Chemical mapping of a 177-nucleotide RNA with DMS and 2A3. The 2A3 profile rests on 1,597 reads. For 2A3 the reverse transcriptase was SuperScript II with manganese. The DMS profile rests on 843 reads. The reactions ran in a buffer of 150 mM KOAc, 10 mM MgCl2 and 150 mM bicine (pH 8.5), at 24 C.
RNA sequence: GGGAACGACUCGAGUAGAGUCGAAAAGAUAUGGAUGUGUAUUUGCUCAACAGCUCGGAAACGAGACAUGAGCUGUACUGCAUCCUAAGUCAACGGACACCACAUCAGUUCGCUGAUGUGGUGUCAAGGAUGCAACUGUCUUCGGACAGUUGCAUCCAAAAGAAACAACAACAACAAC
Reactivity to DMS in 0.01 (KOAc 150mM, MgCl2 10mM, bicine 150mM(pH8.5), 24C), signal-to-noise 1, nucleotides 027 to 126: g000a030u000a270u000g000g000a000u000g000u000g020u010a020u010u000u020g020c000u000c010a020a090c290a160g000c000u000c000g050g000a050a060a280c010g030a040g000a040c040a200u000g000a010g000c020u000g000u000a000c010u010g030c010a000u000c010c000u020a060a150g000u000c080a090a170c130g000g020a020c010a000c000c000a020c000a010u000c000a020g000u000u000c200g010c000u010g020a010u000g010u000g000g000u000g010u000c000a000a060
Reactivity to 2A3 in 0.01 (KOAc 150mM, MgCl2 10mM, bicine 150mM(pH8.5), 24C), signal-to-noise 1, nucleotides 027 to 126: g000a050u090a030u170g000g000a030u000g020u000g000u060a040u060u300u160g000c000u000c010a040a110c040a180g100c000u010c000g010g000a050a030a030c010g030a000g060a030c040a060u060g000a000g000c000u010g000u010a000c020u100g000c000a000u010c010c000u020a120a020g050u000c060a080a040c070g100g010a020c000a020c000c000a010c000a020u000c010a010g150u080u180c300g000c230u010g010a000u010g000u030g000g010u000g000u030c000a000a000